Structure probing data (2A3) for a 207-nucleotide construct. Values cover nucleotides 27 to 156. 2A3 adducts were read by reverse transcription with SuperScript II with manganese. The reactions ran in a buffer of 150 mM KOAc, 10 mM MgCl2 and 150 mM bicine (pH 8.5), at 24 C.

RNA sequence: GGGAACGACUCGAGUAGAGUCGAAAAAAGUCGUAACAAGGUUUCCGUAGAGAACAAAUGAUUCUUUCGCUAAGACAUUUGCUGAAGCCUUGAAGAGCAGUAGUCAUCCUUACUGCUAGUUCAACUUAUUGUUGAGCAACAUUGCCAAAUUGCGGGAGUGUAUGUGGUUCUUCGGAACCACAUACACAAAAGAAACAACAACAACAAC
Reactivity to 2A3 in 0.01 (KOAc 150mM, MgCl2 10mM, bicine 150mM(pH8.5), 24C), signal-to-noise 2, nucleotides 027 to 156: a000a000g160u120c070g020u070a100a040c000a000a000g040g000u000u000u000c040c090g060u200a120g020a060g010a180a010c030a030a030a000u070g060a230u060u050c010u000u090u140c040g040c180u050a000a000g010a000c000a010u010u010u000g060c020u020g010a000a000g000c000c000u000u000g010a080a000g060a000g000c000a000g000u010a000g080u140c030a040u120c060c010u020u030a000c000u020g020c010u010a030g000u000u020c030a000a000c000u070u130a060u160u300g010u000u010g000a000g010c000a040a060c010a160u030u280g030c020c020a070a090a120u200u150g050c060g040g000g010a120